[RMDB]
RNA sequence: GGGAACGACUCGAGUAGAGUCGAAAAAGCGAGUGCUACGGCACUCGCAACGCAGAUGUUAAACUAUCGUUCUGGGAACAGUCGCUCUUACAAGCUGUUUCCAUGGAGAUAGCUUAGCAACUCCUAACGGUGGGGGACAAUUCGUUGUCCCCCACCGAAAAGAAACAACAACAACAAC
Reactivity to 2A3 in 0.01 (KOAc 150mM, MgCl2 10mM, bicine 150mM(pH8.5), 24C), signal-to-noise 2, nucleotides 027 to 126: a010g000c000g000a000g000u010g020c030u020a050c190g120g000c000a000c000u060c000g000c010a010a010c020g000c080a040g010a100u020g030u020u010a000a040a000c000u000a000u000c030g300u150u000c010u000g000g000g020a000a000c000a000g050u110c050g150c080u130c080u130u280a100c130a260a030g000c000u000g000u000u000u000c000c000a000u120g020g020a000g000a000u020a000g000c000u030u030a000g010c000a040a140c020u000c040c010u040a140a010